Chemical mapping of a 177-nucleotide RNA with DMS and 2A3. 2A3 adducts were read by reverse transcription with SuperScript II with manganese. The DMS profile rests on 1,390 reads.
RNA sequence: GGGAACGACUCGAGUAGAGUCGAAAAUUGCCGUAUUGUAGAUUGCUGCUUUGAAGAUCCUUGCGCACCUAAGCCAUGCAAUCCUUGUGGUAACAAGAAAGACAAAGGCUGCAGCCCUUGUGGUGUCGAAUGUGGUGUGGUUCGCCACACCACAUUCAAAAGAAACAACAACAACAAC
Reactivity to DMS in 0.01 (KOAc 150mM, MgCl2 10mM, bicine 150mM(pH8.5), 24C), signal-to-noise 2, nucleotides 027 to 126: u020u000g010c010c030g000u000a060u000u000g020u000a070g000a060u000u000g000c000u020g010c030u000u000u000g050a140a120g020a120u010c080c040u020u000g000c050g010c050a100c030c020u020a050a050g030c130c150a040u020g000c050a050a060u000c030c020u000u000g030u000g000g000u010a110a100c060a030a020g000a100a120a130g010a100c050a060a070a160g010g020c080u000g010c140a070g010c050c050c010u010u000g010u040g010g000u000g020u020c160
Reactivity to 2A3 in 0.01 (KOAc 150mM, MgCl2 10mM, bicine 150mM(pH8.5), 24C), signal-to-noise 2, nucleotides 027 to 126: u030u030g040c030c000g060u090a110u100u120g030u050a040g020a050u040u040g010c060u000g030c010u060u050u130g040a100a030g050a110u100c010c020u110u140g060c010g000c020a040c000c000u040a000a000g000c040c000a040u110g060c010a010a020u050c000c020u020u020g070u040g080g080u110a040a040c000a000a030g190a220a130a040g040a030c030a030a050a030g060g000c000u040g000c030a000g050c000c000c000u000u080g120u010g040g020u030g070u090c030